[RMDB]
RNA sequence: GGGAACGACUCGAGUAGAGUCGAAAAGUCUUCUCCGUCUGCACAGCCCUCACAAGACGGCGUGCGGCACGAGAAAAGGUGCGAAGAAUGUUCACUUGAUCCUGCAACGGCACCCCAGGAAAGGUUAAGCUCAUAAUCAUUUCGAUGAUUAUGAGCUAAAAGAAACAACAACAACAAC
Reactivity to 2A3 in 0.01 (KOAc 150mM, MgCl2 10mM, bicine 150mM(pH8.5), 24C), signal-to-noise 3, nucleotides 027 to 126: g030u010c030u020u010c000u000c020c050g050u000c020u050g010c010a020c000a080g000c010c020c010u060c010a140c030a080a140g040a040c030g000g000c010g010u000g000c000g010g010c110a020c020g150a170g020a020a050a010a040g130g010u040g020c030g030a060a020g090a170a100u150g020u140u100c060a050c100u020u090g030a040u060c000c010u040g040c030a060a030c000g020g000c000a050c000c000c020c020a030g100g000a090a080a020g080g010u080u110a060
Reactivity to DMS in 0.01 (KOAc 150mM, MgCl2 10mM, bicine 150mM(pH8.5), 24C), signal-to-noise 7, nucleotides 027 to 126: g000u000c050u000u000c010u000c010c060g000u000c010u010g010c020a020c010a190g030c010c000c090u000c050a180c300a100a150g010a030c300g010g000c020g020u000g000c020g000g000c130a010c040g010a080g000a040a030a060a060g010g020u000g010c050g010a060a080g020a080a100u000g010u000u000c030a060c030u000u010g010a100u000c020c020u010g000c090a070a080c090g010g000c050a080c020c010c050c020a110g000g000a040a070a090g000g000u000u010a130
Conditions: 150 mM KOAc, 10 mM MgCl2 and 150 mM bicine (pH 8.5), 24 C. Structure probing data (2A3 and DMS) for a 177-nucleotide construct. The DMS profile rests on 7,717 reads. Values cover nucleotides 27 to 126.